The data come from the RNA Mapping Database (RMDB), library OK2TST. Chemical mapping of a 177-nucleotide RNA with DMS and 2A3. 2A3 adducts were read by reverse transcription with SuperScript II with manganese. For 2A3, 956 sequencing reads were counted. The RNA was probed in 150 mM KOAc, 10 mM MgCl2 and 150 mM bicine (pH 8.5) at 24 C. For DMS the reverse transcriptase was MarathonRT.

[RMDB]
RNA sequence: GGGAACGACUCGAGUAGAGUCGAAAAGAGAUGUUAGAGUUUUGGUCAAAUACAACAAUUUCGUUCUCAUUUCCAAAAUUAUCCAACAUGGUAUUGAUACAUGCUGUACCAGCGUGGUUAGCACCGAUAUCCCAGUCGUAUUCGUACGACUGGGAUAAAAAGAAACAACAACAACAAC
Reactivity to DMS in 0.01 (KOAc 150mM, MgCl2 10mM, bicine 150mM(pH8.5), 24C), signal-to-noise 2, nucleotides 027 to 126: g020a160g010a050u000g000u000u000a020g010a090g010u000u000u000u000g020g000u000c160a060a060a060u000a080c230a050a080c170a070a170u020u000u000c060g020u000u000c030u010c040a110u000u000u000c020c000a010a040a060a020u010u020a110u010c020c020a020a010c030a060u000g040g010u000a030u000u000g020a060u020a060c060a020u000g010c000u000g020u020a150c210c090a020g000c050g020u000g000g000u000u000a030g000c070a100c040c020g020a110
Reactivity to 2A3 in 0.01 (KOAc 150mM, MgCl2 10mM, bicine 150mM(pH8.5), 24C), signal-to-noise 1, nucleotides 027 to 126: g040a000g020a010u010g000u040u030a010g000a000g000u000u020u000u030g000g040u120c090a030a040a130u140a130c040a110a000c050a140a180u160u220u000c020g030u050u000c010u010c000a020u000u020u030c000c000a000a010a010a010u080u080a040u050c000c000a010a010c040a090u100g000g100u080a000u050u060g040a060u070a100c030a020u080g000c000u020g040u120a180c070c070a070g020c050g020u000g050g030u020u050a010g020c010a030c000c010g060a070